[RMDB]
RNA sequence: GGGAACGACUCGAGUAGAGUCGAAAAGACUGUAAUGGUCUAACGGUGAAGGCGUUCAAACCCGUUCAACCGCCCAUCCCAAUACUGUAGUACUUCGGUAUCGCAGCCCUCCGCCGCGCCCCGCCCGGUGGCGAUAUAAAUUCGUUUAUAUCGCCACAAAAGAAACAACAACAACAAC
Reactivity to DMS in 0.01 (KOAc 150mM, MgCl2 10mM, bicine 150mM(pH8.5), 24C), signal-to-noise 9, nucleotides 027 to 126: g000a020c010u010g010u020a120a090u050g010g010u000c000u010a090a170c040g010g010u010g010a110a080g000g010c080g010u010u020c180a070a110a130c140c080c020g010u010u000c060a150a070c030c020g010c050c020c040a110u000c010c020c020a090a100u040a060c060u020g010u010a090g010u000a040c040u010u010c080g020g010u000a030u010c070g010c030a050g000c040c020c010u000c030c030g000c050c030g010c060g000c020c000c010c040g000c000c010c030g020
Reactivity to 2A3 in 0.01 (KOAc 150mM, MgCl2 10mM, bicine 150mM(pH8.5), 24C), signal-to-noise 9, nucleotides 027 to 126: g010a000c020u050g060u190a070a120u230g020g000u000c010u020a070a020c020g010g010u050g040a080a040g060g020c050g030u070u090c110a090a090a090c020c010c000g020u080u060c060a090a060c010c010g030c020c010c000a050u040c010c010c010a030a040u110a100c030u070g070u160a080g030u020a070c020u040u060c120g060g000u040a040u100c040g010c050a020g020c010c000c000u030c010c010g010c000c000g010c000g010c000c010c000c000g020c000c010c000g040
Overview: The record gives the reactivity of an RNA of 177 nucleotides to DMS and 2A3.